[RMDB]
Chemical mapping of a 177-nucleotide RNA with 2A3 and DMS. The 2A3 profile rests on 10,352 reads. The DMS profile rests on 7,531 reads. The RNA was probed in 150 mM KOAc, 10 mM MgCl2 and 150 mM bicine (pH 8.5) at 24 C.
RNA sequence: GGGAACGACUCGAGUAGAGUCGAAAAGAUAUGGAGCCUCAGAAGACAUGCCUCUUAGGUUCGGAAACGAACCAGAGGCAACAGCUUCUAGGCUCCUAAGUCGUAGAUAGAAGUUCGCUUCUAUCAAGAACUAUUACUUCUUCGGAAGUAAUAGUUCAAAAGAAACAACAACAACAAC
Reactivity to 2A3 in 0.01 (KOAc 150mM, MgCl2 10mM, bicine 150mM(pH8.5), 24C), signal-to-noise 4, nucleotides 027 to 126: g010a000u030a020u070g000g000a010g000c000c040u100c300a010g050a010a000g010a030c130a240u300g010c010c000u060c040u140u210a140g000g000u010u010c010g020g000a010a020a000c000g000a000a000c000c000a010g010a000g000g020c020a000a000c000a010g000c000u010u000c000u000a000g000g000c000u000c000c000u010a000a000g010u010c010g000u010a060g000a000u000a010g020a020a000g020u080u180c300g070c140u000u000c010u000a010u010c020a010a040
Reactivity to DMS in 0.01 (KOAc 150mM, MgCl2 10mM, bicine 150mM(pH8.5), 24C), signal-to-noise 4, nucleotides 027 to 126: g000a030u000a200u000g000g000a020g020c000c000u000c300a010g010a020a000g010a030c160a210u010g010c010c000u010c000u000u010a150g030g010u010u000c000g020g000a030a030a110c000g010a000a000c010c000a020g000a020g010g010c000a000a010c170a120g000c000u000u000c000u000a020g000g000c000u010c000c000u000a000a060g000u000c010g010u010a130g010a010u000a000g000a030a010g010u000u020c300g010c000u010u000c000u000a010u000c010a130a140